This 177-nucleotide RNA was probed chemically with 2A3 and DMS.
The data come from the RNA Mapping Database (RMDB), library OK1LIB.
For 2A3 the reverse transcriptase was SuperScript II with manganese.
[RMDB]
RNA sequence: GGGAACGACUCGAGUAGAGUCGAAAAACGUUGUCCCGUGCCACGGAUGUACCCCCCGCGCUCAUCGCUCGCUUUGGCGCUUGGGCGGAACAGUGGGCCAGGCAGCAAGCUGACAAGACUGGGCUGACUAAGCACAGUGCUUCGGCACUGUGCUUAGAAAAGAAACAACAACAACAAC
Reactivity to 2A3 in 0.01 (KOAc 150mM, MgCl2 10mM, bicine 150mM(pH8.5), 24C), signal-to-noise 3, nucleotides 027 to 126: a000c110g020u030u050g020u040c000c020c010g010u080g050c020c000a120c060g030g020a060u120g090u160a140c010c010c020c000c000c010g000c000g000c000u050c030a040u030c020g040c050u050c050g150c160u080u040u130g020g000c000g000c030u060u120g020g000g040c050g000g010a050a010c010a050g070u100g010g000g000c030c000a060g010g000c020a000g000c010a000a100g020c030u040g030a060c020a120a010g010a060c030u050g000g050g000c010u040g010a050
Reactivity to DMS in 0.01 (KOAc 150mM, MgCl2 10mM, bicine 150mM(pH8.5), 24C), signal-to-noise 3, nucleotides 027 to 126: a080c140g040u000u000g000u000c000c010c000g040u000g020c000c000a130c050g000g010a050u030g000u050a140c040c000c010c020c030c240g000c080g020c000u020c010a030u000c020g000c030u000c260g020c130u010u050u050g010g000c000g000c100u020u010g010g000g020c030g010g010a110a110c080a070g050u010g020g030g010c050c050a080g010g000c060a060g010c080a100a070g010c030u000g020a050c110a060a090g000a090c070u000g000g000g010c010u000g000a240